[RMDB]
RNA sequence: GGGAACGACUCGAGUAGAGUCGAAAAGGAGGAAGGAUGUCGAAACCGAGAGGUCCUGAGGAAUCGCUUUUUAGAGUGUGACUAACAGAUUGUGUUAGUGUGUACAGCCUCCGUAUACCACUCUUCAGAAACCUCAGGCGACAGUGACGGAGGCCCACGAUCAUCAGUAAUUCGUUACUGAUGAUCGAAAAGAAACAACAACAACAAC
Reactivity to 2A3 in 0.01 (KOAc 150mM, MgCl2 10mM, bicine 150mM(pH8.5), 24C), signal-to-noise 2, nucleotides 027 to 156: g030g000a010g000g030a040a000g040g030a030u060g010u060c030g030a080a030a030c030c030g020a040g010a030g020g050u020c000c010u000g000a000g000g010a020a030u010c020g030c100u150u090u020u080u080a000g010a000g000u010g040u170g060a010c000u000a000a000c000a020g020a040u040u040g020u000g000u010u000a010g000u000g000u000g000u000a010c000a010g010c000c000u000c010c000g000u010a030u010a000c000c000a000c000u000c000u070u050c040a020g000a010a020a010c020c010u000c000a010g030g000c000g010a000c010a060g040u040g080a030c040g020g000a000g020g000c000c000c000a040
Reactivity to DMS in 0.01 (KOAc 150mM, MgCl2 10mM, bicine 150mM(pH8.5), 24C), signal-to-noise 3, nucleotides 027 to 156: g020g010a030g010g020a100a070g020g020a070u010g020u010c030g010a130a090a090c040c030g010a150g010a110g030g010u010c010c000u030g010a080g010g010a020a250u000c010g000c170u000u010u010u000u010a030g000a050g040u010g020u000g030a090c020u000a000a000c000a020g000a030u000u000g000u000g000u000u000a000g000u000g020u000g010u010a010c000a020g020c000c010u010c010c010g040u000a070u000a190c020c010a040c010u000c010u010u000c100a130g000a050a050a300c020c010u010c010a060g030g020c090g000a020c030a110g020u010g010a140c030g000g000a070g030g020c000c030c010a110
Chemical mapping of a 207-nucleotide RNA with 2A3 and DMS. The reactions ran in a buffer of 150 mM KOAc, 10 mM MgCl2 and 150 mM bicine (pH 8.5), at 24 C. For 2A3 the reverse transcriptase was SuperScript II with manganese. The DMS profile rests on 6,570 reads. Values cover nucleotides 27 to 156.